Annotation: Conditions: 150 mM KOAc, 10 mM MgCl2 and 150 mM bicine (pH 8.5), 24 C. Chemical mapping of a 177-nucleotide RNA with 2A3 and DMS. Values cover nucleotides 27 to 126. For DMS, 1,923 sequencing reads were counted.
RNA sequence: GGGAACGACUCGAGUAGAGUCGAAAACGCGCCCGCGCUCGAUUUCAACGCAUUGCGGCGCUUGCUCGCCGCGCACGGCUAUCCGGACGUCGCGCUCGAAGCGGGCACGCUGGCCGGAUUCGUCAAAAUAAUGCUGCUCAUUCGUGAGCAGCAUUAUAAAAGAAACAACAACAACAAC
Reactivity to 2A3 in 0.01 (KOAc 150mM, MgCl2 10mM, bicine 150mM(pH8.5), 24C), signal-to-noise 1, nucleotides 027 to 126: c040g040c030g020c000c030c000g040c000g000c020u070c000g170a300u030u140u070c100a120a090c050g000c050a060u000u230g070c020g020g000c000g020c010u000u110g020c050u000c020g000c000c010g000c010g090c020a040c040g080g000c010u010a010u010c010c030g010g020a020c010g000u060c070g000c010g000c000u000c010g050a160a060g170c080g060g010g000c040a000c020g000c040u050g040g000c030c000g000g060a030u050u050c050g050u060c100a230a000a000
Reactivity to DMS in 0.01 (KOAc 150mM, MgCl2 10mM, bicine 150mM(pH8.5), 24C), signal-to-noise 2, nucleotides 027 to 126: c080g010c120g010c000c010c020g010c050g000c030u010c040g000a150u000u000u010c090a090a070c070g000c060a140u000u000g000c020g000g000c000g000c110u000u000g010c160u000c010g020c010c020g000c010g030c170a050c050g000g030c110u010a080u020c070c030g010g000a040c030g010u000c040g020c030g000c020u000c030g000a090a160g040c100g010g000g000c000a000c020g000c030u000g020g000c010c020g000g000a040u010u000c060g020u020c110a070a080a070